[RMDB]
RNA sequence: GGGAACGACUCGAGUAGAGUCGAAAAGAUAUGGACCGUGUGUGGACAUGCUACGGGAUCGGAAACGAUCCUAGUAGCAACAGCCACCACGGUCCUAAGUCAAAAGUCAUGAGUUCGCUCAUGACAACUCCACUAACAUGUUCGCAUGUUAGUGGAGAAAAGAAACAACAACAACAAC
Reactivity to 2A3 in 0.01 (KOAc 150mM, MgCl2 10mM, bicine 150mM(pH8.5), 24C), signal-to-noise 3, nucleotides 027 to 126: g000a000u020a010u010g000g000a010c000c000g000u030g020u080g020u010g010g030a050c210a300u300g000c000u010a000c010g000g020g010a010u000c000g010g010a000a010a000c010g000a000u000c000c000u020a050g000u010a000g050c010a010a000c050a010g030c000c000a000c000c000a010c000g000g000u000c000c000u000a000a000g000u000c000a020a020a040a040g010u000c010a000u000g000a010g050u090u220c300g040c130u000c010a000u000g010a000c010a000a010
Reactivity to DMS in 0.01 (KOAc 150mM, MgCl2 10mM, bicine 150mM(pH8.5), 24C), signal-to-noise 3, nucleotides 027 to 126: g010a010u000a040u040g000g000a020c000c000g010u010g000u030g050u010g000g000a010c130a170u000g010c000u000a010c000g000g000g000a010u000c000g030g000a010a030a040c000g010a010u000c000c000u010a010g040u010a010g030c010a070a030c260a150g010c000c000a000c000c000a000c010g000g010u000c000c000u000a000a060g000u010c010a100a100a120a110g000u000c000a010u000g000a030g000u010u010c290g030c010u000c000a010u000g000a010c000a090a100
The data come from the RNA Mapping Database (RMDB), library TTRDES. The record gives the reactivity of an RNA of 177 nucleotides to 2A3 and DMS. The 2A3 profile rests on 11,780 reads. The RNA was probed in 150 mM KOAc, 10 mM MgCl2 and 150 mM bicine (pH 8.5) at 24 C. Values cover nucleotides 27 to 126. 2A3 adducts were read by reverse transcription with SuperScript II with manganese.